[RMDB]
RNA sequence: GGGAACGACUCGAGUAGAGUCGAAAACCUCGGUCCGCAAGGGAAUCUGUGAACGGAUCGAGGAAGGACGAGUGCAUCACAGAUUCCCUUGGCACUUGUCCAGUGGAGAUGCGAAAGCAUUUCCACACCAGCUAGAUGGGUUCGCCCAUCUAGCUGGAAAAGAAACAACAACAACAAC
Reactivity to 2A3 in 0.01 (KOAc 150mM, MgCl2 10mM, bicine 150mM(pH8.5), 24C), signal-to-noise 2, nucleotides 027 to 126: c010c010u030c000g010g010u010c020c000g010c040a030a000g030g000g000a010a040u020c010u030g010u000g010a040a030c000g000g020a010u020c010g000a020g010g020a040a050g050g020a020c010g000a000g020u050g020c030a060u010c000a020c000a010g040a000u000u000c000c000c000u000u020g010g000c000a000c000u030u110g020u020c000c000a030g000u000g000g000a010g000a010u000g010c010g020a090a000a010g010c000a000u000u000u000c000c000a000c000a010
Reactivity to DMS in 0.01 (KOAc 150mM, MgCl2 10mM, bicine 150mM(pH8.5), 24C), signal-to-noise 1, nucleotides 027 to 126: c000c000u000c010g010g000u000c060c070g000c180a010a010g000g000g010a020a150u010c000u020g060u000g030a040a210c000g030g000a090u000c000g000a100g010g030a020a000g040g000a170c000g000a080g000u000g000c100a060u000c020a040c020a010g000a000u000u000c030c000c000u040u000g010g000c120a000c000u000u050g010u040c000c050a070g080u000g000g040a010g040a000u000g030c040g000a170a130a120g010c000a000u000u000u000c000c000a000c000a050
About this RNA: Chemical mapping of a 177-nucleotide RNA with 2A3 and DMS. The reactions ran in a buffer of 150 mM KOAc, 10 mM MgCl2 and 150 mM bicine (pH 8.5), at 24 C. Values cover nucleotides 27 to 126.